[RMDB]
The record gives the reactivity of an RNA of 177 nucleotides to DMS.

RNA sequence: GGGAACGACUCGAGUAGAGUCGAAAAGAAAAAGUCGUCGAGUCCGGAGAAUAUCGAGUAGUGGAUACGAUCCGGAGAGAGACGAAAGUCUCGAGUAUCGACUACAAGAUAUCGAGACGACGAAAAAGGGAAAUAAUUCCUUCGGGAAUUAUUUCCCAAAAGAAACAACAACAACAAC
Reactivity to DMS in 0.01 (KOAc 150mM, MgCl2 10mM, bicine 150mM(pH8.5), 24C), signal-to-noise 1, nucleotides 027 to 126: g010a060a080a060a160a170g000u000c000g030u000c000g000a300g000u000c010c000g000g000a090g000a280a100u000a000u020c000g000a190g000u000a070g020u030g000g060a010u000a000c040g000a060u010c000c000g010g000a070g000a090g000a210g030a040c000g000a090a040a060g000u000c020u000c010g000a220g000u000a000u000c020g000a040c030u000a050c080a090a180g000a000u000a000u000c000g020a140g010a000c000g000a070c080g000a020a070a000a190a150

Reactivities are rounded to 0.1 and cut off at 0 and 3.